[RMDB]
RNA sequence: GGGAACGACUCGAGUAGAGUCGAAAAGUACUAGUCUAUAAGACUAGGUACAAUGGAACAUACUACGUUCAACCAUCAUUUGAUGUUCAAGAGAGUGAAGGAUAUGGGUCUCCUACAAAAUAAGGAGCUAAUGACUCUAGUUCGCUAGAGUCAUUAGAAAAGAAACAACAACAACAAC
Reactivity to DMS in 0.01 (KOAc 150mM, MgCl2 10mM, bicine 150mM(pH8.5), 24C), signal-to-noise 6, nucleotides 027 to 126: g010u000a020c000u000a010g000u000c000u000a140u010a120a140g010a010c000u000a000g010g010u000a010c010a100a160u010g010g000a040a050c030a130u000a130c140u000a090c130g010u000u000c040a120a170c050c010a050u000c040a110u010u000u000g000a120u000g020u000u000c170a070a060g000a190g010a040g010u000g010a060a050g010g010a080u010a060u010g000g000g000u000c000u000c000c000u000a070c140a040a060a100a080u010a070a030g000g000a030g020
Reactivity to 2A3 in 0.01 (KOAc 150mM, MgCl2 10mM, bicine 150mM(pH8.5), 24C), signal-to-noise 6, nucleotides 027 to 126: g000u010a010c010u010a010g000u000c010u040a250u060a300a080g000a000c000u000a020g070g000u010a000c020a010a080u130g080g010a040a010c010a050u210a130c060u060a060c110g040u010u020c020a040a030c020c010a020u060c000a020u030u060u210g060a060u050g060u140u190c110a080a020g070a000g010a000g090u050g030a060a000g030g040a040u040a070u180g080g010g010u010c010u000c010c020u030a060c050a050a260a020a010u160a100a040g020g000a000g010

The record gives the reactivity of an RNA of 177 nucleotides to DMS and 2A3. The reactions ran in a buffer of 150 mM KOAc, 10 mM MgCl2 and 150 mM bicine (pH 8.5), at 24 C. Reactivities are given for positions 27 through 126. Source: RMDB library RFMREP, as collected in RNAgym.